The data come from the RNA Mapping Database (RMDB), library M2RFPK.
Chemical mapping of a 207-nucleotide RNA with 2A3 and DMS.
DMS adducts were read by reverse transcription with MarathonRT.
The RNA was probed in 150 mM KOAc, 10 mM MgCl2 and 150 mM bicine (pH 8.5) at 24 C.
RNA sequence: GGGAACGACUCGAGUAGAGUCGAAAAGAAAGAGAGUUAGACACGGUUGAUCUCACCCUUCGGAGGGGCUAUAGAGAUCACUGGAAGCACUACCGGACAACCGGAACAUUGCAGCAAUGCAGCCCAAAAAAUCCAAACAUCUUCGGAUGUUUGGAAACUACUAGUUAUAGUUCGCUAUAACUAGUAGAAAAGAAACAACAACAACAAC
Reactivity to 2A3 in 0.01 (KOAc 150mM, MgCl2 10mM, bicine 150mM(pH8.5), 24C), signal-to-noise 5, nucleotides 027 to 156: g090a010a110a000g080a010g020a010g030u110u120a060g040a080c040a020c120g050g000u100u190g020a000u000c010u000c000a030c010c030c000u080u110c180g190g140a100g010g000g010g020c030u100a080u130a230g010a000g000a000u000c000a000c000u010g010g020a040a030g040c030a010c050u060a040c020c010g050g000a070c070a170a170c030c010g000g040a030a020c020a010u020u120g000c010a010g000c020a000a060u050g000c000a010g020c010c000c010a030a110a030a020a000a010u010c000c000a000a000a000c000a000u000c000u050u090c200g130g000a000u000g000u000u000u000g000g000a010a000a000
Reactivity to DMS in 0.01 (KOAc 150mM, MgCl2 10mM, bicine 150mM(pH8.5), 24C), signal-to-noise 3, nucleotides 027 to 156: g000a150a080a080g010a110g010a150g000u010u000a070g000a150c050a120c040g010g000u000u000g030a050u000c010u020c010a230c010c000c000u010u000c150g020g020a180g020g000g010g010c040u000a110u000a160g000a050g010a060u000c010a030c020u000g000g010a110a110g000c040a070c020u000a180c000c010g010g010a100c170a070a140c030c010g010g010a070a140c070a060u000u000g010c010a080g000c070a080a060u000g020c020a070g010c000c000c010a020a020a070a050a100a130u000c000c000a010a020a030c010a000u000c000u000u000c300g030g000a010u000g000u000u000u000g030g000a000a010a060